[RMDB]
RNA sequence: GGGAACGACUCGAGUAGAGUCGAAAAAUUGAUGCGAAGGGGGGACGGAGAAGGCUAUGUUGGCCGGGCGACGGUUGUCCCGGUUUAAGCGUGUUGGCUGGUUUUCCAGGCAAAUCCGGAAAUUGAACAGCGUAGUUAUAUUCGUAUAACUACGCUGAAAAGAAACAACAACAACAAC
Reactivity to 2A3 in 0.01 (KOAc 150mM, MgCl2 10mM, bicine 150mM(pH8.5), 24C), signal-to-noise 1, nucleotides 027 to 126: a000u050u040g010a010u090g020c040g050a070a050g000g000g050g000g000g000a010c000g010g040a020g000a080a020g060g000c000u010a010u190g090u080u080g090g000c000c000g000g020g000c030g010a140c050g130g000u100u120g050u140c020c010c000g000g040u020u040u140a040a010g010c030g020u040g030u060u010g040g020c020u000g010g040u030u050u110u040c030c000a000g000g040c000a040a040a040u010c040c000g050g090a050a080a070u180u140g030a100a030
Reactivity to DMS in 0.01 (KOAc 150mM, MgCl2 10mM, bicine 150mM(pH8.5), 24C), signal-to-noise 5, nucleotides 027 to 126: a080u000u000g010a080u000g020c060g010a070a080g010g020g010g010g020g010a070c050g000g010a070g010a100a080g010g010c050u000a060u000g020u000u000g010g020c010c010g000g010g000c300g010a080c140g010g010u010u010g000u010c010c010c010g000g000u000u000u000a040a060g010c020g000u000g010u000u000g000g000c020u000g000g010u010u000u000u010c000c020a090g000g000c040a040a040a090u000c040c020g000g000a060a060a100u010u010g010a090a210

Source information: This 177-nucleotide RNA was probed chemically with 2A3 and DMS. The reactions ran in a buffer of 150 mM KOAc, 10 mM MgCl2 and 150 mM bicine (pH 8.5), at 24 C. The data come from the RNA Mapping Database (RMDB), library M2PK90. Reactivities are given for positions 27 through 126.